[RMDB]
RNA sequence: GGGAACGACUCGAGUAGAGUCGAAAAUUCAUGGCUCGUGAAAACUAUUAGAGUCAUCCAAGGGUGGGAAGAGAGAUCAGCAACGUUAACUGGGUGUCAAGAAAACAUACCGAGAUUGAAGCCAUCCACUUCUGCAGGAACACCGAAAAGAAAGGAAAUUACCCUAUCAUUUCGAUGAUAGGGUAAUAAAAGAAACAACAACAACAAC
Reactivity to DMS in 0.01 (KOAc 150mM, MgCl2 10mM, bicine 150mM(pH8.5), 24C), signal-to-noise 3, nucleotides 027 to 156: u010u010c030a100u000g020g010c000u040c020g010u000g010a070a070a150a160c090u010a090u000u000a170g000a040g030u000c010a080u020c010c060a140a120g000g000g010u000g000g020g020a110a040g010a160g020a090g010a100u000c050a120g020c020a040a070c070g000u010u000a060a150c050u000g000g010g040u000g010u000c010a070a070g000a090a050a060a060c030a090u000a080c030c010g010a060g020a150u000u010g010a090a090g020c050c030a130u010c060c050a130c060u000u000c030u010g000c020a090g020g000a060a080c050a110c010c000g000a050a060a070a100g000a050a040a070g000g000a060a130
Reactivity to 2A3 in 0.01 (KOAc 150mM, MgCl2 10mM, bicine 150mM(pH8.5), 24C), signal-to-noise 3, nucleotides 027 to 156: u060u030c020a030u020g020g020c010u010c070g040u090g150a070a060a070a020c070u100a160u150u160a070g000a000g010u000c010a010u000c020c050a040a070g040g000g020u080g030g050g000a100a050g030a010g000a000g000a070u050c020a000g050c010a010a080c090g090u160u130a070a040c090u090g020g000g000u020g030u020c010a020a040g050a050a100a040a010c030a010u100a100c000c030g040a030g000a120u050u110g050a050a010g000c010c000a020u030c020c000a000c020u090u090c030u030g000c010a000g000g040a030a010c040a040c070c010g020a020a010a010a060g080a050a040a010g030g010a060a190